[RMDB]
RNA sequence: GGGAACGACUCGAGUAGAGUCGAAAACGUCGUGAACUAGCGACAAUGCCGUAGAUCGAUCGUUAUCUAACCGAAACAUCGUGACUAGUCGUAGAAUAGAACCAGGAGUGGGCGCUGUCAAACAAAGACGGAGUCUCAGAUUCGUCUGAGGCUCCGUAAAAGAAACAACAACAACAAC
Reactivity to DMS in 0.01 (KOAc 150mM, MgCl2 10mM, bicine 150mM(pH8.5), 24C), signal-to-noise 5, nucleotides 027 to 126: c160g000u000c020g000u010g020a140a040c080u000a080g000c000g000a010c020a120a080u020g010c020c030g000u030a090g010a090u010c030g010a070u000c130g010u010u010a120u010c030u020a100a080c220c120g000a050a040a060c060a030u000c020g010u000g000a110c080u000a060g010u000c030g010u010a050g010a090a090u020a080g010a060a070c070c040a050g000g000a050g050u010g000g000g000c120g030c020u010g000u000c080a060a070a090c220a070a110a080g000
Reactivity to 2A3 in 0.01 (KOAc 150mM, MgCl2 10mM, bicine 150mM(pH8.5), 24C), signal-to-noise 4, nucleotides 027 to 126: c050g010u000c000g000u010g040a080a040c060u020a070g010c000g020a000c000a000a040u140g020c000c010g040u040a020g010a090u020c010g000a020u010c050g010u010u020a160u060c030u010a070a060c060c030g010a000a010a010c000a020u020c020g010u010g070a030c010u030a020g020u050c040g050u050a030g040a090a020u090a020g040a020a030c020c020a030g000g030a050g060u060g020g050g000c060g020c070u040g060u080c030a040a070a110c040a000a170a010g100